[RMDB]
RNA sequence: GGGAACGACUCGAGUAGAGUCGAAAACACCGGGUCUUCGGACCCGGUGAAAAGGAGCCAAAAUAUGAACGGAAAGGGCAGACGGAGCCCAACUCUGUCAAAAAACUGAAGUCUUCGGACUUCAGAAUCGAUUAACAUAGUUCGCUAUGUUAAUCGAAAAAGAAACAACAACAACAAC
Reactivity to 2A3 in 0.01 (KOAc 150mM, MgCl2 10mM, bicine 150mM(pH8.5), 24C), signal-to-noise 2, nucleotides 027 to 126: c010a000c000c000g040g000g000u010c010u050u090c260g060g010a000c000c000c000g020g020u000g000a000a000a000a020g070g000a020g060c020c030a020a180a040a010u300a100u200g070a110a030c040g040g040a090a070a100g030g010g020c020a030g020a050c100g020g060a030g000c020c020c000a010a020c030u020c010u000g020u000c000a020a050a030a020a130a110c010u000g010a000a000g000u000c000u060u120c230g120g000a000c000u010u000c000a010g010a010a070
Reactivity to DMS in 0.01 (KOAc 150mM, MgCl2 10mM, bicine 150mM(pH8.5), 24C), signal-to-noise 2, nucleotides 027 to 126: c000a030c000c000g020g000g020u000c000u000u000c200g030g000a000c010c000c020g000g000u020g010a010a030a050a170g010g020a140g010c010c020a060a060a060a080u010a080u000g010a070a100c090g000g020a050a080a200g020g010g020c120a130g000a090c120g000g000a090g010c010c040c020a030a140c120u000c020u000g010u040c010a000a130a080a040a060a170c020u010g000a030a000g000u010c000u000u000c290g010g000a020c000u000u000c000a000g000a120a100